[RMDB]
RNA sequence: GGGAACGACUCGAGUAGAGUCGAAAAUGUCACAGUCAAAGCGUGCAAUAGGGCCAAGCGUGACGCAUGAUCCGAUUAGAGCGCGGAUUCGGCUCACUGAUAAGCCGUCUUUGGUUAGCUGUAUGGGGAAGAUUCGGUGCGCACGCAGGUUUUGCUGGACUAUGAGACGAUUCGUCGUCUCAUAGUCAAAAGAAACAACAACAACAAC
Reactivity to 2A3 in 0.01 (KOAc 150mM, MgCl2 10mM, bicine 150mM(pH8.5), 24C), signal-to-noise 3, nucleotides 027 to 156: u200g030u080c050a020c030a040g090u080c080a100a010a030g050c040g000u060g020c040a060a080u080a190g030g010g000c020c010a090a060g010c040g020u010g060a140c020g000c030a010u060g040a050u020c010c010g040a010u000u110a060g080a010g070c030g030c020g030g010a000u010u030c020g000g000c000u010c020a080c050u100g070a130u060a150a010g040c010c040g030u010c000u020u040u060g090g030u120u090a040g000c000u010g070u150a080u120g020g000g000g030a030a110g050a090u090u100c060g080g000u020g000c020g000c010a000c000g020c020a000g050g050u000u010u110u110g000c020u080g030
Reactivity to DMS in 0.01 (KOAc 150mM, MgCl2 10mM, bicine 150mM(pH8.5), 24C), signal-to-noise 1, nucleotides 027 to 156: u000g030u000c050a080c040a080g010u000c070a010a070a130g000c020g060u000g070c030a080a130u000a060g030g020g010c050c030a100a180g010c040g010u000g000a210c030g040c010a050u000g010a120u020c000c000g020a300u010u000a150g000a050g030c020g010c030g000g000a060u000u000c040g040g020c000u010c000a300c140u000g000a110u000a050a050g020c000c000g020u000c090u020u000u010g070g000u000u000a150g040c040u020g020u000a060u000g000g000g040g020a070a040g000a090u000u010c050g100g070u000g000c000g040c000a010c020g030c000a110g010g020u000u000u010u000g000c070u000g040